[RMDB]
RNA sequence: GGGAACGACUCGAGUAGAGUCGAAAAGCAGGACUCUGGAUCAUGAAGGUGUUGAGGCCUCAAACUAGACAGGAAGUGGAGGGAUUCUGGAUGUUCCCUCGGCAAGAGGGUGCCACAUAGAACGUAGGCGUUUAUACUCGUUCGCGAGUAUAAACGCAAAAGAAACAACAACAACAAC
Reactivity to DMS in 0.01 (KOAc 150mM, MgCl2 10mM, bicine 150mM(pH8.5), 24C), signal-to-noise 2, nucleotides 027 to 126: g000c100a030g020g000a100c000u030c010u000g010g000a050u000c020a040u030g040a130a070g030g050u000g010u000u000g010a060g000g000c030c000u010c100a110a060a180c060u000a100g000a070c090a020g000g000a050a030g010u020g020g000a060g000g000g010a090u010u000c040u000g050g000a100u010g000u000u000c000c000c000u000c090g020g010c140a080a140g010a010g030g020g000u000g000c070c050a080c030a090u030a050g010a030a130c070g030u020a070g010
Reactivity to 2A3 in 0.01 (KOAc 150mM, MgCl2 10mM, bicine 150mM(pH8.5), 24C), signal-to-noise 2, nucleotides 027 to 126: g030c040a060g000g020a050c010u010c000u030g080g000a060u080c020a090u080g090a070a130g060g020u090g020u090u100g020a000g000g000c030c020u060c060a090a110a020c030u070a080g060a070c020a000g000g090a050a030g030u050g050g040a030g070g010g010a010u100u010c000u080g160g000a080u110g070u090u050c010c000c000u040c010g000g010c130a040a030g040a000g000g000g000u000g010c000c000a020c000a000u130a000g020a120a000c050g010u060a030g130
Chemical mapping of a 177-nucleotide RNA with DMS and 2A3. The data come from the RNA Mapping Database (RMDB), libraries RFM100 and RFMREP. For DMS the reverse transcriptase was MarathonRT.